[RMDB]
RNA sequence: GGGAACGACUCGAGUAGAGUCGAAAAUGGCGCCGGCUGGGCAACAUUCCGAGGGGACCGUCCCCUCGGUAAUGGCGAAUGGGACCCAGAACUCUCUCUAGAUUCCCAGAGAGAAUCGAGAGAAAACAAAUCGUCUACUUCGGUAGACGAAAAAGAAACAACAACAACAAC
Reactivity to DMS in 0.01 (KOAc 150mM, MgCl2 10mM, bicine 150mM(pH8.5), 24C), signal-to-noise 8, nucleotides 027 to 129: u020g000g010c040g030c050c040g000g000c000u000g030g050g020c080a180a120c030a070u010u050c000c020g000a020g020g040g010g020a240c280c300g040u060c020c010c020c020u020c010g000g000u060a000a000u000g010g070c080g030a060a050u040g030g020g030a150c010c000c010a030g020a070a060c160u000c020u030c020u020c010u000a110g010a120u020u030c010c060c060a110g000a110g010a100g020a050a010u020c030g020a010g020a000g000a040a040a080a070c260a080a080a060
Reactivity to 2A3 in 0.01 (KOAc 150mM, MgCl2 10mM, bicine 150mM(pH8.5), 24C), signal-to-noise 6, nucleotides 027 to 129: u090g050g000c020g000c030c000g030g030c030u040g000g000g020c010a040a020c010a040u050u000c000c000g010a000g000g000g000g020a090c020c070g300u300c010c000c000c000u000c000g000g000u010a000a000u010g010g010c040g050a060a060u090g030g010g050a070c010c000c000a020g020a050a050c010u000c000u000c000u000c010u040a040g000a060u010u000c010c000c090a030g030a000g000a010g000a080a030u050c030g010a010g000a000g000a040a060a010a010c130a020a070a060